[RMDB]
RNA sequence: GGGAACGACUCGAGUAGAGUCGAAAAGUACUUAUCUUCGGAUAAGUACAAAUAACAAGAACCGGACGCGUGAGAACCGAGACAAACACCCACCAAAAUAAAAAAGAUGUGCGUUCGCGCACAUCAACAUACUUCAGUAGUUCGCUACUGAAGUAUGAAAAGAAACAACAACAACAAC
Reactivity to DMS in 0.01 (KOAc 150mM, MgCl2 10mM, bicine 150mM(pH8.5), 24C), signal-to-noise 3, nucleotides 027 to 126: g010u000a010c000u000u000a000u000c000u000u020c180g020g000a030u010a000a010g000u000a000c000a030a100a030u010a080a090c160a090a130g010a130a160c080c020g020g030a050c050g000c080g000u000g000a100g010a090a040c060c040g020a090g020a050c110a050a070a090c130a120c040c030c020a090c200c090a070a070a090a070u020a000a020a070a160a080a060g000a010u000g010u000g000c000g010u000u000c180g040c020g000c000a000c000a000u000c000a050a090
Reactivity to 2A3 in 0.01 (KOAc 150mM, MgCl2 10mM, bicine 150mM(pH8.5), 24C), signal-to-noise 3, nucleotides 027 to 126: g000u010a000c000u010u000a010u000c010u010u040c200g060g000a000u000a010a010g000u000a000c010a000a010a000u020a020a010c040a000a080g060a060a030c010c020g010g040a010c040g040c040g030u090g040a140g010a060a010c020c030g010a010g030a100c040a020a120a010c020a070c030c020c020a020c050c040a100a100a110a060u210a060a160a060a030a020a010g010a010u010g000u000g000c010g020u020u030c160g000c000g000c090a000c000a000u000c000a010a000